[RMDB]
RNA sequence: GGGAACGACUCGAGUAGAGUCGAAAAGUGCCCUAUUCGGAGCACUGCAGUUCCCGAUAGAAAGGCUAAGCACCUCGCAAUGAGGUAAGGUGGGACUUUCCUUCAGGAACCAAGCGGUUGGUUCCGAGUAAUAUUACGUCUUCGGACGUAAUAUUACAAAAGAAACAACAACAACAAC
Reactivity to DMS in 0.01 (KOAc 150mM, MgCl2 10mM, bicine 150mM(pH8.5), 24C), signal-to-noise 9, nucleotides 027 to 126: g010u010g000c000c000c010u000a140u010u000c120g000g000a050g010c010a020c000u000g010c120a200g000u000u000c000c000c010g010a040u000a060g000a030a020a030g000g010c030u000a100a140g010c090a060c010c000u000c010g020c180a160a100u010g000a020g000g010u000a030a040g010g020u000g010g010g010a080c010u000u000u000c000c030u000u000c070a090g010g000a020a010c000c030a060a110g010c130g000g010u000u000g010g010u000u000c000c000g010a090
Reactivity to 2A3 in 0.01 (KOAc 150mM, MgCl2 10mM, bicine 150mM(pH8.5), 24C), signal-to-noise 6, nucleotides 027 to 126: g070u060g040c020c000c000u070a230u060u190c080g000g000a080g010c010a000c010u030g000c010a010g010u020u000c000c000c010g000a020u040a040g040a000a030a000g040g000c040u050a030a050g100c030a110c050c010u010c010g040c140a240a300u300g010a010g000g050u040a040a040g060g010u080g010g030g050a100c010u010u000u000c010c010u060u050c050a040g000g010a010a000c010c010a080a030g060c060g170g150u070u100g040g020u020u000c000c000g000a010